[RMDB]
Source: RMDB library OK3TST, as collected in RNAgym. Structure probing data (DMS and 2A3) for a 207-nucleotide construct. For DMS, 10,719 sequencing reads were counted. Values cover nucleotides 27 to 156. The 2A3 profile rests on 7,520 reads. For DMS the reverse transcriptase was MarathonRT.
RNA sequence: GGGAACGACUCGAGUAGAGUCGAAAACGACCCCCUGACGGGUCGGACAUAGCGUCAGGAUCAUCCGUGCCAGUCACCACGGUAAUCAUGUGACUGAUGAUGGUUUUCCAUCUUAAUCUGACUGCGUCGUAGCAGUCUACAGUACUAUGACAUUAGAAGCUAUAAUAUACUUCGGUAUAUUAUAGCUAAAAGAAACAACAACAACAAC
Reactivity to DMS in 0.01 (KOAc 150mM, MgCl2 10mM, bicine 150mM(pH8.5), 24C), signal-to-noise 4, nucleotides 027 to 156: c020g010a060c010c000c000c010c020u000g010a070c040g020g030g010u000c010g020g000a140c050a080u000a060g010c030g010u010c030a120g010g010a140u010c060a080u010c030c020g040u000g000c080c000a200g010u010c000a060c150c010a020c010g020g040u000a070a050u000c160a080u000g010u000g010a100c000u010g010a080u010g000a030u000g020g010u010u000u000u000c000c000a040u000c010u000u000a080a050u020c080u000g010a100c000u000g020c040g040u000c220g030u000a190g030c000a030g000u000c020u000a030c080a100g010u000a050c020u000a040u000g000a060c030a140u000u000a140g010a160
Reactivity to 2A3 in 0.01 (KOAc 150mM, MgCl2 10mM, bicine 150mM(pH8.5), 24C), signal-to-noise 6, nucleotides 027 to 156: c010g020a000c000c000c010c000c000u000g010a010c010g020g000g000u020c020g060g040a060c060a070u220a020g100c010g000u000c010a010g020g020a070u110c040a070u060c010c010g000u020g030c050c010a010g000u000c000a000c010c000a010c000g040g100u120a020a030u060c050a040u030g000u000g010a000c000u000g000a010u080g000a000u000g000g130u120u240u270u100c010c000a000u000c000u010u110a170a110u080c090u100g010a010c010u000g010c020g030u100c050g010u050a010g000c000a010g000u000c000u010a010c010a010g030u050a050c030u040a040u110g040a040c020a090u160u150a110g060a170